[RMDB]
RNA sequence: GGGAACGACUCGAGUAGAGUCGAAAAGAUAUGGAGAGUGCAGGGAGGGACUUUCGGAAACGAAAGAAUCCCAUCGAUCUGCCUCUCCUAAGUCAAAACCGUCCAUCCUGUUCGCAGGAUGGACGGACAUGCGAACAUUGUUCGCAAUGUUCGCAUGAAAAGAAACAACAACAACAAC
Reactivity to DMS in 0.01 (KOAc 150mM, MgCl2 10mM, bicine 150mM(pH8.5), 24C), signal-to-noise 5, nucleotides 027 to 126: g010a020u000a020u010g000g000a000g000a010g010u020g010c000a020g000g000g010a000g030g010g000a070c000u010u000u010c000g020g000a010a000a030c010g010a000a010a020g000a120a290u000c000c000c000a300u000c200g010a020u000c000u000g010c010c000u000c000u010c000c000u000a000a050g000u010c010a130a070a120a170c010c010g020u000c000c000a010u000c000c000u000g000u010u020c270g020c010a010g000g010a010u000g000g000a000c000g000g000a030
Reactivity to 2A3 in 0.01 (KOAc 150mM, MgCl2 10mM, bicine 150mM(pH8.5), 24C), signal-to-noise 4, nucleotides 027 to 126: g000a000u010a010u050g000g000a000g000a010g000u300g010c000a000g010g010g020a040g000g000g020a030c000u000u000u010c010g000g000a010a010a010c000g000a000a000a000g030a050a130u050c020c000c010a040u270c010g000a000u000c000u000g000c000c000u000c000u000c000c000u000a000a000g000u000c000a000a000a030a210c000c000g000u000c000c000a010u010c000c000u050g100u140u140c300g030c150a010g000g000a010u000g000g010a010c000g000g000a010
An RNA of 177 nucleotides, treated with DMS and 2A3 and read out base by base. It was measured as part of the RMDB library TTRDES. The 2A3 profile rests on 27,243 reads. For 2A3 the reverse transcriptase was SuperScript II with manganese.